[RMDB]
RNA sequence: GGGAACGACUCGAGUAGAGUCGAAAAGUGAGCAACGAAAACAAAAGAUACAAAGACAACUGUUAGUGAGACUAUCUCUGCAAAGCUUGGGACUAUUACUCACUCCUAGUCCAGAUACUAAACAGACCUCCUGGAUCCGGUUCGCCGGAUCCAGGAGAAAAGAAACAACAACAACAAC
Reactivity to 2A3 in 0.01 (KOAc 150mM, MgCl2 10mM, bicine 150mM(pH8.5), 24C), signal-to-noise 1, nucleotides 027 to 126: g030u030g000a010g150c070a150a270c150g190a000a000a000a070c190a010a010a000a000g120a040u300a120c150a100a210a080g110a040c000a010a190c140u040g010u050u000a010g000u050g000a000g000a010c000u040a100u160c000u000c010u080g130c200a030a260a000g060c100u140u080g000g000g040a040c000u010a000u140u000a070c030u000c000a000c000u000c000c000u000a000g000u060c000c000a040g040a120u260a110c000u000a000a160a000c040a000g220a000c080